[RMDB]
RNA sequence: GGGAACGACUCGAGUAGAGUCGAAAAGGACCCCUGCUUUAGCCCUCAACUCUUAGGCAUGUUUCAGUUCUGAUUUUGGUCAGCAUAGAGCUUUCCUUCUAUUUACCAGGAGGGUCUCUACUGAUAUGGAUCAAUGGCAGGAGGUGAUAUUGGGUCAUACUAUCCGUAGGUUCGCCUACGGAUAGUAAAAAGAAACAACAACAACAAC
Reactivity to DMS in 0.01 (KOAc 150mM, MgCl2 10mM, bicine 150mM(pH8.5), 24C), signal-to-noise 2, nucleotides 027 to 156: g000g020a130c020c000c010c040u000g000c040u000u000u000a120g010c030c010c010u010c020a070a060c000u000c020u000u000a130g030g010c010a090u000g010u000u010u010c040a160g020u000u000c050u020g030a150u000u000u010u000g040g030u000c010a010g000c040a120u000a040g010a070g020c110u000u000u000c010c010u000u000c040u000a200u000u000u000a120c110c050a040g020g000a040g010g000g020u010c010u010c010u000a070c030u000g010a040u000a090u010g010g010a050u000c030a080a100u000g010g000c020a080g010g010a070g020g000u010g000a060u000a000u000u000g010g030g000u000c040a300
Reactivity to 2A3 in 0.01 (KOAc 150mM, MgCl2 10mM, bicine 150mM(pH8.5), 24C), signal-to-noise 4, nucleotides 027 to 156: g090g050a050c020c000c000c010u050g060c070u110u110u200a050g010c040c020c010u060c030a050a040c020u010c030u120u100a100g040g020c040a050u060g000u030u080u090c020a070g000u090u080c020u020g140a160u030u050u170u280g110g000u020c000a000g010c050a080u010a040g010a010g000c000u040u090u150c010c010u000u010c010u050a180u190u290u140a150c090c050a000g000g010a000g010g010g040u010c000u000c000u000a040c040u010g030a030u030a110u230g020g000a020u000c040a090a010u120g070g040c020a020g030g030a040g000g050u040g030a030u050a070u130u160g010g020g000u040c050a030
The record gives the reactivity of an RNA of 207 nucleotides to DMS and 2A3. For 2A3 the reverse transcriptase was SuperScript II with manganese. The data come from the RNA Mapping Database (RMDB), library OK3TST. The reactions ran in a buffer of 150 mM KOAc, 10 mM MgCl2 and 150 mM bicine (pH 8.5), at 24 C. For 2A3, 1,900 sequencing reads were counted.